The record gives the reactivity of an RNA of 177 nucleotides to DMS and 2A3.
The RNA was probed in 150 mM KOAc, 10 mM MgCl2 and 150 mM bicine (pH 8.5) at 24 C.
For 2A3, 1,209 sequencing reads were counted.
For DMS the reverse transcriptase was MarathonRT.
High DMS reactivity at an A or C suggests that its Watson-Crick edge is free.
The DMS profile rests on 2,472 reads.
RNA sequence: GGGAACGACUCGAGUAGAGUCGAAAAAGACAUUAGUGUGGCAGUUUGACUCCAUGCUGGCCUAUAACUACAAGGCCUUCACUCUGUACCCAGAAGAGUUUGGGCACAAGUCAGGAUUGCCAGAGAAACAGCUCCUAGUAUUCGUACUAGGAGCUGUAAAAGAAACAACAACAACAAC
Reactivity to DMS in 0.01 (KOAc 150mM, MgCl2 10mM, bicine 150mM(pH8.5), 24C), signal-to-noise 2, nucleotides 027 to 126: a080g000a120c190a080u000u000a040g000u040g000u010g020g020c020a030g020u010u010u000g000a010c000u000c060c030a130u000g000c010u000g040g000c030c010u000a060u040a130a100c280u030a110c200a200a000g020g020c000c010u030u000c180a160c040u000c040u000g020u040a170c060c050c060a260g000a060a030g030a010g020u000u030u000g000g010g010c120a070c300a090a010g000u000c030a070g010g000a000u000u010g010c030c000a120g010a100g000a140a120
Reactivity to 2A3 in 0.01 (KOAc 150mM, MgCl2 10mM, bicine 150mM(pH8.5), 24C), signal-to-noise 3, nucleotides 027 to 126: a010g190a050c130a090u190u160a210g040u130g000u010g150g040c000a000g020u000u020u040g040a030c020u010c060c060a030u090g030c010u000g040g010c000c010u160a160u090a280a110c200u270a030c040a070a020g010g000c020c000u060u060c020a070c020u070c000u000g030u150a080c000c010c010a030g080a150a000g030a000g000u060u040u120g040g020g000c060a050c030a120a000g000u020c020a000g050g030a070u000u020g000c000c000a010g010a000g000a060a180